Conditions: 150 mM KOAc, 10 mM MgCl2 and 150 mM bicine (pH 8.5), 24 C. Structure probing data (DMS and 2A3) for a 177-nucleotide construct. 2A3 adducts were read by reverse transcription with SuperScript II with manganese. It was measured as part of the RMDB libraries RFM100 and RFMREP.

[RMDB]
RNA sequence: GGGAACGACUCGAGUAGAGUCGAAAAACAGCAGUAGCCUUAUGCAACAAGAGCAUAUAUUUUUUACUUGUAUCACUGUAAUAUGAUGUUGCUGGAAUGCUACUGUUUCUGAGAUGCUCAUUUGAGCCUCAGUCCUUCCAUUCGUGGAAGGACUGAGAAAAGAAACAACAACAACAAC
Reactivity to DMS in 0.01 (KOAc 150mM, MgCl2 10mM, bicine 150mM(pH8.5), 24C), signal-to-noise 2, nucleotides 027 to 126: a060c160a060g000c030a000g010u000a010g000c010c090u000u010a220u000g020c000a010a030c000a060a070g030a140g030c020a010u000a010u010a000u030u010u000u040u010u000a030c060u030u000g030u000a080u060c140a070c140u020g020u000a070a020u020a050u010g010a110u030g000u010u010g000c020u010g000g040a070a030u020g000c020u000a010c010u010g000u000u000u010c060u000g000a050g000a180u000g010c010u000c010a300u010u020u070g000a010g000c000
Reactivity to 2A3 in 0.01 (KOAc 150mM, MgCl2 10mM, bicine 150mM(pH8.5), 24C), signal-to-noise 6, nucleotides 027 to 126: a010c040a010g020c000a000g030u010a000g000c000c000u100u080a070u070g020c000a000a000c010a060a010g090a050g140c050a000u010a030u000a130u120u040u020u080u130u210a120c100u080u150g060u110a070u110c030a080c080u080g050u080a070a130u060a090u140g240a040u090g000u000u000g000c020u040g030g200a110a030u080g000c000u000a000c000u000g000u000u040u010c010u050g070a090g020a060u060g000c010u000c010a160u090u070u300g000a000g010c000